An RNA of 177 nucleotides, treated with 2A3 and DMS and read out base by base. For 2A3 the reverse transcriptase was SuperScript II with manganese. Conditions: 150 mM KOAc, 10 mM MgCl2 and 150 mM bicine (pH 8.5), 24 C. The DMS profile rests on 2,435 reads.
RNA sequence: GGGAACGACUCGAGUAGAGUCGAAAAUAUACGGUGGAUGUACGGCCCUACAUCACCGAUGUGCAGCGCGAUCCCGCGAACUUCAACACCUACCGGUCGAAGUACGGAUGGUACUCCCUGCGGAGGGGAGGGCGUAGUAAUUCGUUACUACGCCCUCAAAAGAAACAACAACAACAAC
Reactivity to 2A3 in 0.01 (KOAc 150mM, MgCl2 10mM, bicine 150mM(pH8.5), 24C), signal-to-noise 2, nucleotides 027 to 126: u190a020u030a050c020g010g000u090g120g140a060u010g020u020a040c070g110g040c040c000c000u030a010c000a010u010c000a000c010c010g020a020u070g030u050g090c110a060g060c040g000c020g060a090u050c000c000c010g020c010g030a060a010c020u090u070c060a070a040c010a080c060c010u140a200c030c050g000g060u080c090g070a070a020g020u050a060c000g080g060a100u060g060g030u040a050c020u040c000c020c000u060g060c030g080g040a040g000g000g010
Reactivity to DMS in 0.01 (KOAc 150mM, MgCl2 10mM, bicine 150mM(pH8.5), 24C), signal-to-noise 3, nucleotides 027 to 126: u010a090u000a130c020g000g020u000g020g010a040u000g030u000a050c130g010g010c060c070c090u000a000c010a010u010c000a040c010c000g030a090u000g000u020g000c070a040g010c030g000c060g010a070u000c020c010c030g020c070g030a090a100c050u000u010c040a020a090c110a100c040c040u010a140c140c080g000g000u000c060g000a060a020g010u010a070c010g010g030a120u020g010g020u000a080c040u000c000c010c020u010g000c090g030g000a130g000g010g000